[RMDB]
RNA sequence: GGGAACGACUCGAGUAGAGUCGAAAAUCGUCGCGAAGCCGCUCAAUGAAGGGCAAUAUUUCCUGCCGCCGCGCAUGAUCGAGCGAGGAUAAUGGCUCAUCGAGCAGCAGAAGUGCGGGAUCGGACAAAAAUUACCAUGGUUCGCCAUGGUAAUUUUAAAAGAAACAACAACAACAAC
Reactivity to 2A3 in 0.01 (KOAc 150mM, MgCl2 10mM, bicine 150mM(pH8.5), 24C), signal-to-noise 3, nucleotides 027 to 126: u030c010g090u030c030g000c010g110a040a020g030c010c010g060c060u030c020a090a190u200g080a070a120g000g010g010c010a010a030u120a090u060u060u010c010c020u030g130c070c020g010c010c000g050c010g020c080a150u190g050a130u140c060g020a020g070c030g010a020g000g040a040u130a120a050u160g080g000c000u000c010a020u020c030g010a010g010c030a020g000c000a000g020a270a030g060u040g080c030g000g000g050a060u080c060g060g000a030c070a010
Reactivity to DMS in 0.01 (KOAc 150mM, MgCl2 10mM, bicine 150mM(pH8.5), 24C), signal-to-noise 5, nucleotides 027 to 126: u010c040g020u010c020g030c020g010a190a170g010c000c030g010c010u000c030a100a090u010g010a130a080g010g010g010c030a070a060u010a090u010u000u000c010c000u000g000c170c030g010c020c030g010c070g010c170a100u010g000a070u010c030g010a090g010c040g010a060g000g000a070u000a060a070u000g010g010c010u010c000a050u000c040g000a030g010c020a050g010c020a070g010a120a170g010u010g010c010g000g010g010a040u010c070g000g000a090c170a030